An RNA of 177 nucleotides, treated with DMS and read out base by base. Reactivities are given for positions 27 through 126. Source: RMDB library OK2TRN, as collected in RNAgym. For DMS the reverse transcriptase was MarathonRT. The RNA was probed in 150 mM KOAc, 10 mM MgCl2 and 150 mM bicine (pH 8.5) at 24 C.
RNA sequence: GGGAACGACUCGAGUAGAGUCGAAAACACUAGCUGCAGCAGCAGUUGGCGCAAGCUGAGAUCCAGCUGCGCGUUGUCAGUCAGGGGGAUGGUAAGGGCCUCAUUGAACGGGGCGUUGGCCAGAGCCUGCAACAACCAUCUUCGGAUGGUUGUUGCAAAAAGAAACAACAACAACAAC
Reactivity to DMS in 0.01 (KOAc 150mM, MgCl2 10mM, bicine 150mM(pH8.5), 24C), signal-to-noise 1, nucleotides 027 to 126: c040a140c090u020a070g010c030u000g000c040a140g030c100a090g020c030a010g000u000u000g000g010c060g010c080a070a080g000c010u000g010a220g070a170u020c080c000a030g020c000u000g000c040g000c070g000u010u000g000u000c120a040g000u010c090a020g000g010g000g000g010a190u000g000g020u000a120a100g000g000g010c000c020u000c020a120u020u040g030a100a230c180g020g010g000g010c010g020u000u000g030g000c010c020a110g000a300g000c020c050